[RMDB]
RNA sequence: GGGAACGACUCGAGUAGAGUCGAAAAGAAAGAAGGCUGGACAGCGGGCAACGGAAUCCCAAAAGCAGCUGUUGUCUCCAGAGCAUUCCAGCUGCGCUUGGAUUUCGUUCCCUGCUCUCCUGCCUAAAUUGCUCAGCUACUUCGGUAGCUGAGCAAUAAAAGAAACAACAACAACAAC
Reactivity to DMS in 0.01 (KOAc 150mM, MgCl2 10mM, bicine 150mM(pH8.5), 24C), signal-to-noise 1, nucleotides 027 to 126: g020a120a050a120g010a170a030g000g010c010u000g030g010a010c130a060g010c000g050g010g080c280a000a000c010g000g020a010a000u000c040c000c100a040a010a050a170g000c000a000g000c000u010g030u020u000g040u040c010u000c140c230a080g010a030g000c150a010u000u040c250c000a020g000c000u050g000c020g000c160u000u000g010g000a100u000u000u000c000g020u000u010c150c010c000u000g010c000u000c090u000c020c080u000g010c010c000u030a000a010
Reactivity to 2A3 in 0.01 (KOAc 150mM, MgCl2 10mM, bicine 150mM(pH8.5), 24C), signal-to-noise 2, nucleotides 027 to 126: g090a000a140a010g160a030a010g010g020c030u070g020g000a000c000a000g000c010g000g000g000c010a000a000c000g000g010a000a000u020c040c030c010a040a090a000a020g000c010a000g000c020u010g020u030u070g030u040c050u010c050c050a050g020a020g070c030a000u100u090c040c000a010g000c000u000g000c040g070c080u010u000g000g000a000u000u000u000c000g000u000u000c000c000c000u000g000c000u000c000u000c000c010u000g000c000c020u030a050a080